[RMDB]
RNA sequence: GGGAACGACUCGAGUAGAGUCGAAAAGAUAUGGACGCUGUCCGAAUUCAUUAAGCUGCGAACGUCGUGUCGGAAACGACACAGACGGAGGUAUAGCUAAUAAUGAAUUCGGACAGCGUCCUAAGUCGUACAUAAAUAGCUUCGGCUAUUUAUGUACAAAAGAAACAACAACAACAAC
Reactivity to DMS in 0.01 (KOAc 150mM, MgCl2 10mM, bicine 150mM(pH8.5), 24C), signal-to-noise 4, nucleotides 027 to 126: g010a110u000a300u000g000g010a010c010g010c000u000g000u010c000c010g000a020a000u000u000c000a000u000u000a070a070g020c010u000g010c050g020a100a300c000g020u000c010g010u010g000u000c010g010g000a120a080a240c010g000a010c010a000c000a070g010a010c000g000g000a060g010g000u000a090u010a040g010c000u010a110a130u000a020a000u010g000a020a010u000u000c000g010g000a000c000a000g000c000g000u000c000c000u000a010a090g010u000c100

Chemical mapping of a 177-nucleotide RNA with DMS. The data come from the RNA Mapping Database (RMDB), library TTRINS. Conditions: 150 mM KOAc, 10 mM MgCl2 and 150 mM bicine (pH 8.5), 24 C. The DMS profile rests on 7,485 reads.